[RMDB]
RNA sequence: GGGAACGACUCGAGUAGAGUCGAAAAUCUUUGAUCUCCUGAAGGAGGAAGGAGCUCUCGAGCGCUCUCCCGCUCCUCGGAUGGGCCGUUGCCGGCGAACGAGCCCGAAGUGCGAGUGGGGGAGAACUCCCGAGAGUUGGGAGACAGAAAGAGAGCGGAUUAGACCUACCUUCGGGUAGGUCUAAUCAAAAGAAACAACAACAACAAC
Reactivity to 2A3 in 0.01 (KOAc 150mM, MgCl2 10mM, bicine 150mM(pH8.5), 24C), signal-to-noise 1, nucleotides 027 to 156: u000c000u050u040u150g090a080u030c050u050c010c030u130g140a140a160g050g050a030g060g000a050a080g050g070a100g000c000u000c000u000c000g050a080g010c090g010c030u000c000u000c020c000c000g000c000u020c010c010u000c020g050g020a080u110g060g020g000c000c020g000u030u090g000c070c080g090g050c080g000a020a000c010g000a020g000c010c000c000g000a050a000g010u050g090c140g070a000g010u000g000g000g030g000g000a000g010a000a000c000u010c000c000c000g090a130g010a000g080u150u170g000g000g000a000g010a010c050a070g110a020a090a020g020a000g000a000g030c070g000
This 207-nucleotide RNA was probed chemically with 2A3.